Overview:
This 177-nucleotide RNA was probed chemically with DMS and 2A3. The DMS profile rests on 3,215 reads. 2A3 adducts were read by reverse transcription with SuperScript II with manganese. DMS (dimethyl sulfate) methylates the pairing face of unpaired adenines and cytosines. Reactivities are given for positions 27 through 126.
[RMDB]
RNA sequence: GGGAACGACUCGAGUAGAGUCGAAAAGGGUUUAGUGUGACUGGGCAAAACUUGAAGUUGGAUGAAGUAAAUUUGGAAUUGAACCCAGUGGAAAUUAUAGAUGAUUCUUCUACUUAUGAUCAGAUUGGCAUCAUACAUCAUUCGUGAUGUAUGAUGCAAAAGAAACAACAACAACAAC
Reactivity to DMS in 0.01 (KOAc 150mM, MgCl2 10mM, bicine 150mM(pH8.5), 24C), signal-to-noise 4, nucleotides 027 to 126: g010g000g010u000u010u000a080g020u010g030u010g020a080c050u010g000g000g010c060a070a070a070a100c070u000u010g010a090a150g020u000u000g010g010a170u010g010a050a090g010u010a060a090a080u000u010u000g010g010a080a080u000u000g010a080a140c030c010c020a040g010u000g000g000a070a050a030u000u000a080u000a060g010a080u000g000a140u000u000c060u010u000c040u000a040c060u010u000a080u000g010a100u000c060a070g000a150u000u010g010
Reactivity to 2A3 in 0.01 (KOAc 150mM, MgCl2 10mM, bicine 150mM(pH8.5), 24C), signal-to-noise 1, nucleotides 027 to 126: g060g000g000u020u230u210a150g000u000g070u080g170a040c030u030g000g000g000c100a000a030a050a030c090u180u120g050a010a200g080u280u260g070g070a100u110g120a140a060g000u110a040a040a100u080u010u000g030g000a040a060u070u000g000a020a000c000c000c000a000g000u000g020g080a050a050a030u300u130a140u160a120g090a050u050g010a010u080u060c000u010u060c000u120a140c010u100u100a070u300g130a090u150c010a020g090a300u040u140g070